RNA sequence: GGGAACGACUCGAGUAGAGUCGAAAAUAUUUCGCGCGUUGGUUUGCGCCUAUUUAGGCGGUUCGGCGCGCUAGGUUGGUUAGGUCAUGGCGCAAGGGGUCAUGGUCGUUGAAGGUCUAGAUAGGCGGAAUAUUUAAAAUUUCGAUUUUAAAUAUUCAAAAGAAACAACAACAACAAC
Reactivity to DMS in 0.01 (KOAc 150mM, MgCl2 10mM, bicine 150mM(pH8.5), 24C), signal-to-noise 3, nucleotides 027 to 126: u050a060u010u010u020c140g020c000g000c040g030u010u010g000g020u010u010u040g010c010g000c010c000u010a070u030u020u040a000g010g010c000g010g000u000u020c020g010g000c000g030c030g040c020u000a000g000g010u020u000g000g010u010u030a130g000g020u000c020a020u010g010g000c020g020c100a150a140g020g010g000g010u000c050a040u000g010g010u000c030g000u000u010g000a080a130g010g000u000c000u000a060g000a080u030a080g000g010c030g000
Reactivity to 2A3 in 0.01 (KOAc 150mM, MgCl2 10mM, bicine 150mM(pH8.5), 24C), signal-to-noise 5, nucleotides 027 to 126: u150a010u050u250u090c040g000c010g000c000g010u020u020g120g120u050u090u300g160c000g000c000c000u100a190u120u210u270a020g010g000c010g040g040u050u060c010g020g000c000g000c010g000c010u020a030g030g060u030u100g060g060u090u140a040g010g010u010c010a010u010g030g000c110g010c280a120a090g080g060g000g030u020c000a010u030g000g020u010c010g000u000u030g030a010a010g020g000u000c010u000a040g020a160u040a020g170g000c040g030
Structure probing data (DMS and 2A3) for a 177-nucleotide construct. The data come from the RNA Mapping Database (RMDB), library OK1LIB. The 2A3 profile rests on 3,417 reads. The RNA was probed in 150 mM KOAc, 10 mM MgCl2 and 150 mM bicine (pH 8.5) at 24 C. 2A3 adducts were read by reverse transcription with SuperScript II with manganese.